[RMDB]
Structure probing data (DMS and 2A3) for a 207-nucleotide construct. For 2A3 the reverse transcriptase was SuperScript II with manganese. The DMS profile rests on 6,050 reads.
RNA sequence: GGGAACGACUCGAGUAGAGUCGAAAAAGUGGACGUUUAUUGUUACCGAGCAUUGUUUGUUUUGUCCACGCUCGGACUUCCUUCUGGCGAAAGCCAGUUCACAGGCAGCUAGCCGAACCCAGCCCGUAGCAGCAACCUAGAGGCUAGCGCUACGAUAGCCGUAUUUAUAUUUCGAUAUAAAUACGGCAAAAGAAACAACAACAACAAC
Reactivity to DMS in 0.01 (KOAc 150mM, MgCl2 10mM, bicine 150mM(pH8.5), 24C), signal-to-noise 3, nucleotides 027 to 156: a050g040u010g010g010a060c090g020u000u000u000a040u010u000g000u000u000a250c030c020g010a080g040c030a160u010u000g000u020u000u000g000u000u010u000u000g010u000c030c050a050c070g000c030u000c030g010g010a100c100u000u010c040c000u000u010c000u000g010g020c000g010a130a120a270g010c000c000a000g010u000u000c040a090c090a180g010g020c040a130g040c030u000a040g010c000c000g010a080a130c040c010c020a180g010c040c070c000g020u000a110g010c050a050g050c030a060a040c040c010u010a100g020a300g020g010c010u000a050g050c020g030c010u000a000c050g000a120u010a100
Reactivity to 2A3 in 0.01 (KOAc 150mM, MgCl2 10mM, bicine 150mM(pH8.5), 24C), signal-to-noise 3, nucleotides 027 to 156: a010g010u030g000g010a020c050g000u060u120u090a140u130u240g080u110u100a120c070c000g030a030g020c060a120u080u110g040u120u090u070g070u030u060u090u110g020u020c010c000a000c010g010c010u010c000g030g000a050c010u030u030c010c000u010u140c000u000g000g000c000g040a090a030a010g000c020c000a000g010u060u110c100a090c030a100g000g040c010a020g000c040u080a030g010c000c010g010a050a030c000c020c020a000g020c040c010c030g010u020a020g040c140a000g000c020a030a060c010c000u070a080g000a070g150g000c020u030a020g000c000g000c000u050a030c010g050a040u110a070